[RMDB]
Source: RMDB library OK2TRN, as collected in RNAgym. An RNA of 177 nucleotides, treated with DMS and read out base by base.

RNA sequence: GGGAACGACUCGAGUAGAGUCGAAAAGAGUAGAGGAGUAUCAAAUAGUUGAGGUAUUCAACGUUAGAACGAAAGUGGAUAGAGCUGAAAUCAGGGAUGGGGAGUUAAUACUGUACAAGGGGAGGAAUAAAUUACCACCGUUCGCGGUGGUAAUUUAAAAAGAAACAACAACAACAAC
Reactivity to DMS in 0.01 (KOAc 150mM, MgCl2 10mM, bicine 150mM(pH8.5), 24C), signal-to-noise 1, nucleotides 027 to 126: g010a060g010u020a100g000a070g000g010a160g020u000a100u010c060a130a130a080u010a070g010u020u010g000a040g030g030u020a060u020u000c040a040a030c020g000u010u000a110g020a050a070c080g000a060a030a090g000u000g000g010a080u000a070g030a140g010c070u000g000a080a100a050u000c120a070g010g000g020a040u020g010g010g000g000a040g000u010u000a040a060u000a050c110u000g000u020a080c190a050a090g000g000g000g000a090g000g000a060a080